[RMDB]
RNA sequence: GGGAACGACUCGAGUAGAGUCGAAAAUCGCUACUUCCAGACGGCGGUCAGCGUGUCUAACGAUGCGCCAGUGUUGCUGGACCACUUCCUCGAUGACGCGGUAGAAGUUGACGUGGAUGCCAUCUGCCGCAUAGCCUUGUUUCGACAAGGCUAUGCGAAAAGAAACAACAACAACAAC
Reactivity to DMS in 0.01 (KOAc 150mM, MgCl2 10mM, bicine 150mM(pH8.5), 24C), signal-to-noise 3, nucleotides 027 to 126: u010c010g010c000u000a300c130u000u000c020c020a060g000a130c080g010g020c010g000g000u000c150a040g020c020g020u000g010u000c010u010a140a150c230g010a010u000g010c020g010c010c010a040g010u000g010u010u010g020c010u000g000g010a050c180c080a070c040u010u000c030c020u000c100g030a110u010g000a080c060g010c030g020g020u010a050g020a060a130g010u000u010g040a080c100g020u010g020g000a120u000g000c030c040a040u000c040u010g000c110
Reactivity to 2A3 in 0.01 (KOAc 150mM, MgCl2 10mM, bicine 150mM(pH8.5), 24C), signal-to-noise 1, nucleotides 027 to 126: u020c020g040c050u090a090c020u050u000c000c010a080g050a090c000g000g030c010g000g110u060c010a000g020c010g000u020g000u000c020u050a120a000c110g020a000u000g010c000g000c050c030a020g000u000g090u080u180g080c000u010g020g040a020c000c040a060c030u060u000c010c010u050c000g070a110u130g030a020c030g040c050g090g030u020a010g040a130a050g000u050u140g020a030c020g030u070g030g020a070u120g060c050c000a110u080c030u060g000c000
Notes:
Structure probing data (DMS and 2A3) for a 177-nucleotide construct. Values cover nucleotides 27 to 126. The reactions ran in a buffer of 150 mM KOAc, 10 mM MgCl2 and 150 mM bicine (pH 8.5), at 24 C. For 2A3, 1,182 sequencing reads were counted. For 2A3 the reverse transcriptase was SuperScript II with manganese. The DMS profile rests on 2,411 reads. 2A3 is a SHAPE reagent: it acylates the 2'-hydroxyl of flexible nucleotides of all four kinds.